[RMDB]
RNA sequence: GGGAACGACUCGAGUAGAGUCGAAAAAAGCUCAUUUUCGAAUGAGCUUGAAGCGUGAACGCAGGAUAACGCAGAAACCCGCCGCUGAACCUCCCAAGCGAAAGAUUAAGGUCUUCGGACCUUAAAAGCACUAAAGCAUUUUCGAAUGCUUUAGUGCAAAAGAAACAACAACAACAAC
Reactivity to DMS in 0.01 (KOAc 150mM, MgCl2 10mM, bicine 150mM(pH8.5), 24C), signal-to-noise 1, nucleotides 027 to 126: a000a000g000c000u000c010a010u010u000u010u000c110g010a000a000u000g010a010g010c000u000u000g000a100a160g000c010g000u010g000a190a120c080g020c030a060g000g010a090u020a210a020c030g010c010a090g030a220a040a070c000c010c030g030c030c090g010c030u010g000a160a120c030c050u000c000c010c020a120a070g010c100g010a100a100a120g000a150u000u000a020a030g000g000u000c010u010u010c180g020g040a000c000c000u000u000a030a010a150a150
Chemical mapping of a 177-nucleotide RNA with DMS. The reactions ran in a buffer of 150 mM KOAc, 10 mM MgCl2 and 150 mM bicine (pH 8.5), at 24 C.